[RMDB]
Record summary
Chemical mapping of a 177-nucleotide RNA with DMS and 2A3. For DMS, 909 sequencing reads were counted. As a SHAPE reagent, 2A3 marks flexible, mostly unpaired nucleotides at the ribose 2'-OH. The RNA was probed in 150 mM KOAc, 10 mM MgCl2 and 150 mM bicine (pH 8.5) at 24 C.
RNA sequence: GGGAACGACUCGAGUAGAGUCGAAAAGAUAUGGAUUUAUCUUGAACUACACGAUCGGAAACGAUCGAAUGCAAGAGUAAAUCCUAAGUCAAACCGAGGAUAGCUGGUUCGCCAGCUAUCCUCGGAACUAAGUUCGAACGUUCGCGUUCGAACUUAGAAAAGAAACAACAACAACAAC
Reactivity to DMS in 0.01 (KOAc 150mM, MgCl2 10mM, bicine 150mM(pH8.5), 24C), signal-to-noise 1, nucleotides 027 to 126: g010a010u000a300u000g000g000a010u010u000u000a000u010c010u010u020g010a150a160c050u020a160c300a220c020g010a000u010c000g000g000a060a100a200c000g000a000u000c000g000a070a000u000g000c010a020a130g000a000g010u000a000a000a000u000c000c000u010a090a080g010u000c070a040a160a170c010c000g010a020g000g010a070u000a000g000c020u000g000g020u000u000c210g070c020c000a000g020c000u000a000u000c010c000u000c000g000g000a010a040
Reactivity to 2A3 in 0.01 (KOAc 150mM, MgCl2 10mM, bicine 150mM(pH8.5), 24C), signal-to-noise 1, nucleotides 027 to 126: g000a010u070a090u170g010g000a000u030u050u030a030u080c000u020u010g030a180a060c010u140a080c200a070c130g000a000u000c000g010g190a110a030a060c010g010a020u010c040g000a050a010u110g000c020a020a000g030a020g090u100a010a010a000u050c000c000u020a130a040g100u030c020a060a040a040c010c000g020a000g010g020a000u000a000g000c000u000g040g030u060u220c300g000c140c000a000g000c010u000a000u000c000c020u010c010g000g000a000a010